[RMDB]
Structure probing data (2A3 and DMS) for a 207-nucleotide construct.
Source: RMDB library RSTRND, as collected in RNAgym.
The DMS profile rests on 4,707 reads.
RNA sequence: GGGAACGACUCGAGUAGAGUCGAAAAAACCGAGCCUUACAAAGCUUUGAGUAAGGAACGGAAUUUAUGAAGCUACUGAAGUGAAAAGCUUGUUUGUAGGCGUUUCAUGGAGGGAAUGUUAAAAUACAAACUGCACUCGGAGAUGCUUAAAUGAAACCAAACAACAUUUGUUCGCAAAUGUUGUUUGAAAAGAAACAACAACAACAAC
Reactivity to 2A3 in 0.01 (KOAc 150mM, MgCl2 10mM, bicine 150mM(pH8.5), 24C), signal-to-noise 4, nucleotides 027 to 156: a000a010c010c010g000a010g000c000c010u000u000a000c010a000a010a010g010c000u010u000u010g000a000g010u010a000a000g000g000a020a030c010g020g040a020a000u090u100u010a020u030g020a000a010g010c000u000a010c000u010g020a030a010g010u010g010a000a030a000a000g000c000u020u010g010u010u010u000g010u010a000g000g000c010g000u000u020u000c010a010u020g010g000a040g040g000g000a000a000u000g010u030u100a040a020a020a020u010a000c000a010a010a000c010u020g020c020a040c040u090c090g100g040a120g050a110u050g020c020u130u160a110a160a080u230g040a100a030a030c040
Reactivity to DMS in 0.01 (KOAc 150mM, MgCl2 10mM, bicine 150mM(pH8.5), 24C), signal-to-noise 3, nucleotides 027 to 156: a080a170c020c020g010a110g020c000c000u010u020a010c010a000a100a040g000c020u000u000u000g000a300g030u000a020a000g010g000a050a090c040g010g000a120a090u000u010u000a030u030g010a050a030g020c000u000a180c020u000g010a290a300g000u000g000a040a050a030a020g020c010u000u000g010u000u000u000g020u010a010g010g020c000g020u000u000u000c000a030u010g000g010a190g000g000g000a070a030u010g000u020u000a010a020a030a080u000a060c010a010a020a020c020u000g010c040a100c050u000c000g000g020a110g010a140u010g010c010u000u010a030a070a110u000g000a160a070a120c150
The reactions ran in a buffer of 150 mM KOAc, 10 mM MgCl2 and 150 mM bicine (pH 8.5), at 24 C. For DMS the reverse transcriptase was MarathonRT.